An RNA of 177 nucleotides, treated with DMS and 2A3 and read out base by base. For DMS, 3,471 sequencing reads were counted. Conditions: 150 mM KOAc, 10 mM MgCl2 and 150 mM bicine (pH 8.5), 24 C. Values cover nucleotides 27 to 126. For 2A3, 1,874 sequencing reads were counted.
RNA sequence: GGGAACGACUCGAGUAGAGUCGAAAAUUAAAGAGUGCGUAAUAGCUCACUAGUCAAGAGAUCCCGCGCCGAAGAUGUCCGGGGCUAAAACUUACCACCGAAGCUAUGGAUGUACACUAUGUGUACGAUAACCUAGGUUGUUCGCAACCUAGGUUAUAAAAGAAACAACAACAACAAC
Reactivity to DMS in 0.01 (KOAc 150mM, MgCl2 10mM, bicine 150mM(pH8.5), 24C), signal-to-noise 4, nucleotides 027 to 126: u020u010a090a080a100g000a080g030u000g010c060g000u010a100a070u010a100g020c020u000c030a070c070u000a090g000u010c140a100a090g010a110g000a100u000c010c020c030g030c220g010c030c030g010a080a080g010a090u000g020u000c120c060g010g000g030g020c060u000a030a040a070a070c080u000u000a120c050c030a050c070c060g010a100a050g010c030u000a020u000g010g000a120u010g010u000a020c030a010c020u000a100u010g030u000g000u000a010c030g010
Reactivity to 2A3 in 0.01 (KOAc 150mM, MgCl2 10mM, bicine 150mM(pH8.5), 24C), signal-to-noise 2, nucleotides 027 to 126: u120u020a070a020a030g070a020g020u070g000c010g040u070a040a070u050a160g000c000u030c030a040c030u090a060g090u080c100a130a060g030a010g000a160u020c000c000c000g030c050g010c020c020g110a120a040g050a140u140g060u010c030c020g040g000g030g030c010u050a040a020a110a050c010u040u050a040c000c010a000c030c040g030a050a040g000c030u060a040u130g080g050a090u230g000u010a000c020a010c020u120a080u300g010u020g000u000a010c000g000